[RMDB]
RNA sequence: GGGAACGACUCGAGUAGAGUCGAAAAUGGCCACUGUUUUUUUUUGUUUUUCGCUAAAGCUUUAUUGGACAUGCCUAUGCCCACGCAUUCCCAUAUUAUCUGCAGCUGCUUUAGCUCCACGGCAGCAGCUUAGAAUUUAUUUCGAUAAAUUCUAAGCAAAAGAAACAACAACAACAAC
Reactivity to DMS in 0.01 (KOAc 150mM, MgCl2 10mM, bicine 150mM(pH8.5), 24C), signal-to-noise 5, nucleotides 027 to 126: u030g000g000c010c010a050c090u000g000u000u000u000u000u000u000u010u010u000g000u000u000u010u000u010c070g010c070u020a060a050a060g000c010u000u010u010a040u020u010g010g010a050c030a040u030g010c020c020u000a050u010g020c010c000c020a060c090g020c060a100u020u000c000c000c000a100u030a060u030u010a060u020c080u020g010c140a080g000c020u000g000c020u000u000u010a080g010c040u000c020c030a070c180g010g000c000a020g020c050a130
Reactivity to 2A3 in 0.01 (KOAc 150mM, MgCl2 10mM, bicine 150mM(pH8.5), 24C), signal-to-noise 9, nucleotides 027 to 126: u080g030g010c020c000a050c040u010g080u020u000u000u000u000u010u000u050u050g080u050u050u010u020u080c020g000c090u110a070a030a050g000c010u100u120u110a090u130u170g030g010a010c010a030u110g010c000c010u050a060u110g020c010c010c000a010c030g030c010a050u020u040c010c000c010a030u050a100u200u120a080u060c070u080g060c040a050g000c010u020g000c000u050u070u080a040g010c010u020c020c010a030c020g030g000c000a010g010c010a010
An RNA of 177 nucleotides, treated with DMS and 2A3 and read out base by base. The 2A3 profile rests on 12,300 reads. DMS adducts were read by reverse transcription with MarathonRT. The reactions ran in a buffer of 150 mM KOAc, 10 mM MgCl2 and 150 mM bicine (pH 8.5), at 24 C.